[RMDB]
RNA sequence: GGGAACGACUCGAGUAGAGUCGAAAAGAUAUGGAUAACGAAGAACGAGCCCGGACGUUUGACGUCGGAAACGACCGAGUCCUCUCGGGAGUUAUCCUAAGUCGAAAGUUAGACUUCGGUCUAACAACUGCUUAUGUCUAUUCGUAGACAUAAGCAGAAAAGAAACAACAACAACAAC
Reactivity to 2A3 in 0.01 (KOAc 150mM, MgCl2 10mM, bicine 150mM(pH8.5), 24C), signal-to-noise 4, nucleotides 027 to 126: g020a020u090a030u150g000g000a010u010a010a000c060g210a300a120g020a080a010c010g010a010g030c180c300c020g010g000a010c030g040u110u270u300g060a030c030g000u020c000g020g030a050a030a020c030g000a010c000c000g010a030g030u000c000c020u090c010u000c000g000g000g020a060g000u010u000a000u000c000c000u010a120a030g050u030c030g080a110a090a030g010u000u000a000g000a010c000u020u050c300g060g000u000c010u000a010a000c000a010a030
Reactivity to DMS in 0.01 (KOAc 150mM, MgCl2 10mM, bicine 150mM(pH8.5), 24C), signal-to-noise 7, nucleotides 027 to 126: g000a030u000a300u010g000g000a010u000a000a010c000g000a140a170g010a110a160c010g010a020g000c190c140c300g020g000a020c010g000u000u010u000g010a160c300g000u000c030g010g000a080a050a110c010g000a020c000c020g010a060g010u000c020c030u000c010u000c000g000g000g000a110g000u000u000a000u000c000c000u010a030a100g000u000c010g000a100a060a100g000u000u000a000g000a010c000u000u010c210g010g000u000c000u000a010a010c010a090a200
An RNA of 177 nucleotides, treated with 2A3 and DMS and read out base by base.
The reactions ran in a buffer of 150 mM KOAc, 10 mM MgCl2 and 150 mM bicine (pH 8.5), at 24 C.
The data come from the RNA Mapping Database (RMDB), library TTRDEL.
2A3 adducts were read by reverse transcription with SuperScript II with manganese.
2A3 is a SHAPE reagent: it acylates the 2'-hydroxyl of flexible nucleotides of all four kinds.
For DMS the reverse transcriptase was MarathonRT.
For 2A3, 9,977 sequencing reads were counted.
Reactivities are given for positions 27 through 126.